[RMDB]
RNA sequence: GGGAACGACUCGAGUAGAGUCGAAAAACGGGUAGCGGGUGUGAGAGCACGACCCGCGACAUCGGGACUGAGACACUGCCCGGACUCCUACGGGAGGCUGCAGCAACGAAUCUUCCGCAAUGGGCGCGUAAGCGAGAAUGUUCGCAUUCUCGCUUACAAAAGAAACAACAACAACAAC
Reactivity to DMS in 0.01 (KOAc 150mM, MgCl2 10mM, bicine 150mM(pH8.5), 24C), signal-to-noise 3, nucleotides 027 to 126: a100c050g010g000g030u000a070g030c010g010g020g010u010g010u010g000a250g040a180g020c050a080c030g000a060c010c000c010g010c020g000a030c110a030u010c020g000g000g000a160c110u000g010a100g010a140c080a050c040u000g030c020c080c050g000g000a060c030u000c010c010u000a100c090g030g000g000a040g000g020c020u000g020c110a070g020c040a050a070c080g000a050a100u000c020u000u000c020c010g010c130a070a090u000g010g000g020c100g020c140
Reactivity to 2A3 in 0.01 (KOAc 150mM, MgCl2 10mM, bicine 150mM(pH8.5), 24C), signal-to-noise 3, nucleotides 027 to 126: a000c060g030g020g010u020a020g020c030g010g040g030u030g010u020g050a300g020a050g180c030a000c060g120a060c000c000c000g010c000g020a010c010a080u090c010g030g010g020a040c040u060g050a020g010a060c030a020c070u040g020c010c000c000g000g050a050c010u010c020c020u020a050c140g030g000g000a010g000g010c010u040g010c000a030g000c030a030a030c030g030a080a030u000c040u080u020c040c000g000c050a050a150u080g010g070g030c090g000c030
Structure probing data (DMS and 2A3) for a 177-nucleotide construct. Values cover nucleotides 27 to 126. For DMS the reverse transcriptase was MarathonRT. 2A3 adducts were read by reverse transcription with SuperScript II with manganese. High 2A3 reactivity points to a flexible backbone, as in loops and unpaired stretches. Source: RMDB library RFMREP, as collected in RNAgym.